[RMDB]
RNA sequence: GGGAACGACUCGAGUAGAGUCGAAAAGCACAGACACCGAACGACAUCCUUAAAAAAAAAAAGAAGAGGUCCGCUGUUGUCCUUGGAUGGCACGUUGGUAAUGGAGGCCAUGCCAGCGCGUCUGCUGGGGAAUAAUGGUGUUCGCACCAUUAUUCCCAAAAGAAACAACAACAACAAC
Reactivity to DMS in 0.01 (KOAc 150mM, MgCl2 10mM, bicine 150mM(pH8.5), 24C), signal-to-noise 1, nucleotides 027 to 126: g000c050a070c020a080g010a070c010a090c020c010g000a000a130c050g010a150c050a040u000c000c040u030u000a020a040a000a000a010a000a020a110a060a060a130g000a010a040g010a070g020g040u000c030c020g010c060u000g000u020u000g000u000c030c090u000u020g010g050a090u000g020g010c000a020c040g000u010u000g000g000u020a130a030u020g000g050a180g040g030c080c000a210u020g000c000c000a010g000c030g010c040g010u030c030u000g020c060u010g010
Reactivity to 2A3 in 0.01 (KOAc 150mM, MgCl2 10mM, bicine 150mM(pH8.5), 24C), signal-to-noise 3, nucleotides 027 to 126: g020c010a020c030a080g040a020c060a060c020c040g050a070a020c010g050a010c030a060u110c020c030u150u110a050a000a020a010a000a000a000a000a000a000a020g100a040a020g050a030g020g020u030c040c030g070c040u080g070u130u070g020u020c010c010u020u030g070g000a060u030g030g030c010a000c080g000u010u020g000g030u060a110a020u050g070g010a080g080g050c020c030a000u040g030c000c010a010g000c000g030c010g030u010c050u080g020c040u050g040
This 177-nucleotide RNA was probed chemically with DMS and 2A3. The reactions ran in a buffer of 150 mM KOAc, 10 mM MgCl2 and 150 mM bicine (pH 8.5), at 24 C. For DMS the reverse transcriptase was MarathonRT. Source: RMDB library OK1LIB, as collected in RNAgym. The DMS profile rests on 1,950 reads.